[RMDB]
RNA sequence: GGGAACGACUCGAGUAGAGUCGAAAACGCGGGCAUUCCAUGCAUAUCAAAGGGGGCGGAACCUGCAGGAGCCGAUGGUGGGCAUUGACAUAAAGGAUCCAAUCAGUUUCACCAACUGGGUUUAUCGGCCUGUGUUCAUGUUCGCAUGAACACAGGCAAAAGAAACAACAACAACAAC
Reactivity to DMS in 0.01 (KOAc 150mM, MgCl2 10mM, bicine 150mM(pH8.5), 24C), signal-to-noise 1, nucleotides 027 to 126: c200g020c040g030g020g000c050a100u010u010c010c080a070u000g020c080a110u000a140u000c080a050a120a130g040g030g000g000g040c040g000g010a080a050c020c040u000g040c040a080g040g010a080g000c010c050g040a080u010g010g030u000g050g000g010c010a040u010u020g000a130c160a090u000a090a090a030g040g020a100u010c000c050a090a060u010c000a060g010u010u000u000c050a140c190c120a080a030c010u000g040g010g000u010u020u000a010u000c110g010

The record gives the reactivity of an RNA of 177 nucleotides to DMS. High DMS reactivity at an A or C suggests that its Watson-Crick edge is free. Reactivities are given for positions 27 through 126. The RNA was probed in 150 mM KOAc, 10 mM MgCl2 and 150 mM bicine (pH 8.5) at 24 C.